[RMDB]
Structure probing data (DMS and 2A3) for a 177-nucleotide construct.

RNA sequence: GGGAACGACUCGAGUAGAGUCGAAAACUGGAUGGUAAUAACUUGAAAGUAACAGUUCAUCCAAAGAAUCCUCUUCUGAUAAUUCUUGGGUGAUUUAGACAGCUGGCUUCUUUGCUCGGAAGGCAUACCAUGAGCCUAGUUUCGACUAGGCUCAUGGAAAAGAAACAACAACAACAAC
Reactivity to DMS in 0.01 (KOAc 150mM, MgCl2 10mM, bicine 150mM(pH8.5), 24C), signal-to-noise 2, nucleotides 027 to 126: c050u010g000g000a100u000g000g000u000a160a110u000a070a040c050u000u000g000a270a170a050g020u010a070a140c130a030g000u000u000c020a010u010c030c010a030a070a030g000a030a040u010c060c200u000c060u000u000c210u020g000a050u010a100a050u000u000c040u010u000g000g010g020u000g000a050u000u020u000a070g000a070c170a070g030c040u000g010g020c030u000u000c050u000u050u020g030c040u000c050g000g000a080a130g010g020c090a070u000a130
Reactivity to 2A3 in 0.01 (KOAc 150mM, MgCl2 10mM, bicine 150mM(pH8.5), 24C), signal-to-noise 1, nucleotides 027 to 126: c010u030g030g050a000u010g000g020u020a160a120u120a300a060c010u010u020g000a060a070a130g060u040a100a010c010a040g000u070u070c000a000u040c010c010a060a140a040g030a000a030u040c080c000u060c160u230u060c090u110g030a040u050a210a010u020u020c000u000u100g000g000g050u010g050a040u000u090u060a030g030a030c000a010g010c000u010g070g050c010u110u060c010u070u030u040g000c000u020c000g050g040a080a010g050g080c050a010u060a110

The data come from the RNA Mapping Database (RMDB), library OK2TST. High DMS reactivity at an A or C suggests that its Watson-Crick edge is free. For DMS the reverse transcriptase was MarathonRT.